[RMDB]
RNA sequence: GGGAACGACUCGAGUAGAGUCGAAAAGUCGGUGCUGAUUGUCUGGCGCCGCGACCUGCGGGCCAUUGUGCGGCUGCUGGCCUGGCAGGGUGCUGCGCUGGCCGCGAUCCCGCUACUGCGCGGCAUCAAUCAUCUCACCGUUCGCGGUGAGAUGAUUAAAAGAAACAACAACAACAAC
Reactivity to 2A3 in 0.01 (KOAc 150mM, MgCl2 10mM, bicine 150mM(pH8.5), 24C), signal-to-noise 2, nucleotides 027 to 126: g140u110c020g000g000u020g000c020u080g030a300u300u150g110u140c060u080g020g000c020g010c000c000g000c000g000a030c010c010u000g000c010g020g000g020c060c000a040u050u180g080u110g070c050g070g020c010u090g000c060u020g000g000c000c000u030g300g000c000a020g000g000g040u070g010c010u000g000c010g000c000u010g050g000c020c010g000c000g000a000u050c030c000c010g020c070u170a120c030u060g020c020g000c010g040g030c010a020u030c030
Reactivity to DMS in 0.01 (KOAc 150mM, MgCl2 10mM, bicine 150mM(pH8.5), 24C), signal-to-noise 1, nucleotides 027 to 126: g020u010c010g010g000u000g000c000u000g020a170u000u000g010u000c100u000g000g010c000g000c000c050g000c000g000a110c010c040u000g000c010g000g010g000c000c000a070u050u010g020u000g000c000g010g000c020u020g010c120u040g000g030c020c000u000g000g060c020a010g030g010g010u000g010c000u000g000c000g010c040u010g000g000c020c040g000c040g010a100u040c070c020c020g010c140u050a090c180u020g030c010g020c030g020g010c010a030u010c110